[RMDB]
RNA sequence: GGGAACGACUCGAGUAGAGUCGAAAAGUGUCUUUCGAGACACCACAUCCCGUAGGAGCUGUGGUGUUGUCAGAUCCAAGGGUUCGAAAGAGCCCGACGAUCUUGGAUUUACACGUAACAUCAGCUCCUAAACGGCCUCUAACCAUUUCGAUGGUAACGACACGUAAUCCUUCGGGAUUACGUGUCGAAAAGAAACAACAACAACAAC
Reactivity to 2A3 in 0.01 (KOAc 150mM, MgCl2 10mM, bicine 150mM(pH8.5), 24C), signal-to-noise 1, nucleotides 027 to 156: g050u010g000u030c120u060u300u140c200g080a000g000a040c000a000c020c040a150c060a090u100c000c000c040g000u030a020g000g000a000g000c000u000g020u070g010g000u030g040u020u000g000u000c000a000g000a000u020c020c020a010a050g000g000g000u010u000c000g020a130a050a060g000a000g000c010c000c000g010a030c010g000a000u000c000u000u090g100g000a030u130u210u290a010c010a000c040g170u180a130a080c060a150u250c020a060g000c000u000c000c000u000a010a000a000c000g080g070c020c070u220c070u180a110a110c000c000a020u000u070u160c170g210a010u030g010g050u030a090a010